RNA sequence: GGGAACGACUCGAGUAGAGUCGAAAAAUUACGGUACAUUAACACGUACGGAUUUAAGUAAUAUUUACGACCGUUAUCAUGAAGUAUUGUCGUCCAAACAUCGAGUUGGAUUAGGCAGCUCUACUGAGCCCAUGAUCGUAUUCGUACGAUCAUGGGCAAAAGAAACAACAACAACAAC
Reactivity to 2A3 in 0.01 (KOAc 150mM, MgCl2 10mM, bicine 150mM(pH8.5), 24C), signal-to-noise 2, nucleotides 027 to 126: a000u030u040a000c020g010g020u000a010c000a030u080u030a070a020c010a010c060g050u060a010c010g040g040a030u100u200u120a130a000g060u010a010a080u020a120u140u190u010a020c010g020a000c010c000g060u050u060a110u130c090a060u090g040a020a050g000u020a040u170u000g020u000c020g020u000c000c030a060a050a060c000a160u220c110g050a090g300u000u020g040g000a020u000u040a010g010g030c010a000g010c010u020c000u020a110c060u100g020a000
Reactivity to DMS in 0.01 (KOAc 150mM, MgCl2 10mM, bicine 150mM(pH8.5), 24C), signal-to-noise 2, nucleotides 027 to 126: a050u000u030a020c020g030g010u000a010c010a100u000u020a100a120c250a110c240g000u000a010c010g020g000a100u000u000u020a080a080g000u000a060a040u000a120u000u000u000a090c050g000a180c020c010g020u020u000a100u000c040a110u000g010a130a040g000u000a080u000u000g010u000c000g010u020c000c010a010a000a010c000a220u020c290g000a100g000u000u000g000g000a030u000u000a100g000g000c000a030g010c020u010c000u010a060c120u000g000a120